[RMDB]
RNA sequence: GGGAACGACUCGAGUAGAGUCGAAAAUUACGGACAGACGGGCAUGGCUAGAUCGACUCGGCUAAUGAUCGCGAUCAAGAAUGUAUAUACUUUAUAUAGUAAAUGCUUGCUUCUGCCUGUUAUAUAAGCGCAGGCUAAAUUUCGAUUUAGCCUGCGCAAAAGAAACAACAACAACAAC
Reactivity to 2A3 in 0.01 (KOAc 150mM, MgCl2 10mM, bicine 150mM(pH8.5), 24C), signal-to-noise 1, nucleotides 027 to 126: u040u000a000c000g030g120a000c050a020g000a000c000g000g000g070c150a000u020g000g000c000u010a000g010a000u000c010g110a240c040u000c020g000g170c070u190a220a000u150g010a010u140c090g000c010g000a000u000c000a000a030g170a050a110u030g000u050a000u000a000u000a080c000u000u170u040a300u190a040u250a180g030u030a010a020a020u000g000c000u110u000g000c000u080u040c030u000g000c040c000u000g040u000u300a150u080a000u120a250a090